[RMDB]
RNA sequence: GGGAACGACUCGAGUAGAGUCGAAAAGGACCAUGGGGCCGGGGGUUCGAGUCCCUUCACCUCGACCAAGAAAAGGGCCUAUAGCUCAGGUGGUUAGAGCGCACGCCUGAUAAGCGUGAGGUCGCUGCAUACCUCGGUCGUUCGCGACCGAGGUAUGAAAAGAAACAACAACAACAAC
Reactivity to DMS in 0.01 (KOAc 150mM, MgCl2 10mM, bicine 150mM(pH8.5), 24C), signal-to-noise 2, nucleotides 027 to 126: g000g000a110c070c040a080u010g030g060g030g030c000c030g000g000g050g010g010u030u000c080g020a210g020u020c000c000c010u010u010c050a080c030c010u000c010g000a140c030c040a140a130g000a070a010a050a050g000g000g010c000c000u000a080u000a100g000c010u010c000a140g000g010u000g000g000u020u020a110g010a010g000c050g000c000a020c010g000c000c000u040g000a160u050a100a180g020c020g050u000g000a090g000g000u000c000g040c050u030g000
Reactivity to 2A3 in 0.01 (KOAc 150mM, MgCl2 10mM, bicine 150mM(pH8.5), 24C), signal-to-noise 3, nucleotides 027 to 126: g050g000a020c000c050a110u110g030g000g060g030c000c020g030g000g000g000g000u060u060c080g010a050g090u060c040c000c000u030u080c110a110c010c010u000c020g050a030c010c020a040a050g100a110a110a030a000g010g010g010c010c000u130a160u160a050g000c010u020c020a030g120g010u090g020g040u090u060a040g020a010g070c010g050c050a030c010g010c020c020u050g040a090u110a300a000g020c000g020u010g030a030g000g030u030c060g020c070u060g000